[RMDB]
RNA sequence: GGGAACGACUCGAGUAGAGUCGAAAAGGGGUCGUGGGAGGUCCGGGUGGAGCAUCGAUCAUACACUGAAGCCUCCACGGUGUAUGGGAGCUCCACUCGGACCGAAGAACACGACGGAGGCACCCAAAGCGUAAUUGUGUUUCGACACAAUUACGAACCAUUCUACCUGUUUCGACAGGUAGAAUGGAAAAGAAACAACAACAACAAC
Reactivity to 2A3 in 0.01 (KOAc 150mM, MgCl2 10mM, bicine 150mM(pH8.5), 24C), signal-to-noise 1, nucleotides 027 to 156: g030g010g060g070u010c000g000u020g000g010g000a020g000g000u000c000c000g000g000g010u000g000g000a000g000c000a020u300c040g010a020u010c000a010u000a000c000a000c010u050g030a090a010g000c000c000u000c000c010a000c000g010g010u000g000u000a000u000g000g000g030a000g000c000u000c000c000a000c000u000c000g000g000a010c000c000g010a000a000g000a000a000c000a000c010g000a000c010g000g000a000g000g000c000a020c000c000c000a040a100a010g100c010g000u000a000a000u010u000g010u000g010u010u090u140c270g140a030c000a000c000a000a000u000u000a000c000g010a000a040
Structure probing data (2A3) for a 207-nucleotide construct. The 2A3 profile rests on 2,836 reads. It was measured as part of the RMDB library RNAMAK.